Structure probing data (DMS and 2A3) for a 177-nucleotide construct. The reactions ran in a buffer of 150 mM KOAc, 10 mM MgCl2 and 150 mM bicine (pH 8.5), at 24 C. For 2A3 the reverse transcriptase was SuperScript II with manganese. It was measured as part of the RMDB library M2PK90. Reactivities are given for positions 27 through 126.
RNA sequence: GGGAACGACUCGAGUAGAGUCGAAAAUGAAAGAGCGUCGCAAACACACAGACUAAGUCUCACACUGACUGACGCUAAACCGCUCUGUCAGUGUGGGAGAUAUCGGUUUUAAUGUGAGCGGAAAAAAACUUGAUAAUUACUUCGGUAAUUAUCAAGUAAAAGAAACAACAACAACAAC
Reactivity to DMS in 0.01 (KOAc 150mM, MgCl2 10mM, bicine 150mM(pH8.5), 24C), signal-to-noise 9, nucleotides 027 to 126: u010g010a100a100a070g010a140g000c040g020u000c000g000c030a040a090a110c110a040c080a070c190a090g010a030c070u010a110a140g010u000c000u000c000a010c000a010c000u000g000a010c000u000g000a010c050g010c030u000a030a070a120c120c040g010c040u000c000u000g000u000c000a010g010u000g010u000g000g000g000a010g010a070u010a070u000c080g000g000u000u000u000u010a070a160u000g010u000g000a100g010c010g010g000a000a000a060a060a070a050
Reactivity to 2A3 in 0.01 (KOAc 150mM, MgCl2 10mM, bicine 150mM(pH8.5), 24C), signal-to-noise 7, nucleotides 027 to 126: u160g030a050a040a050g070a010g030c030g030u030c010g000c030a010a100a010c040a010c010a010c040a050g030a030c040u130a200a100g130u010c000u000c000a000c000a000c000u000g000a000c010u020g010a000c040g000c000u000a090a030a030c040c020g000c020u000c000u020g000u000c000a000g000u000g000u000g000g010g000a000g010a000u110a020u040c020g010g030u020u020u030u130a120a060u050g000u010g000a010g000c010g030g050a060a040a010a010a010a000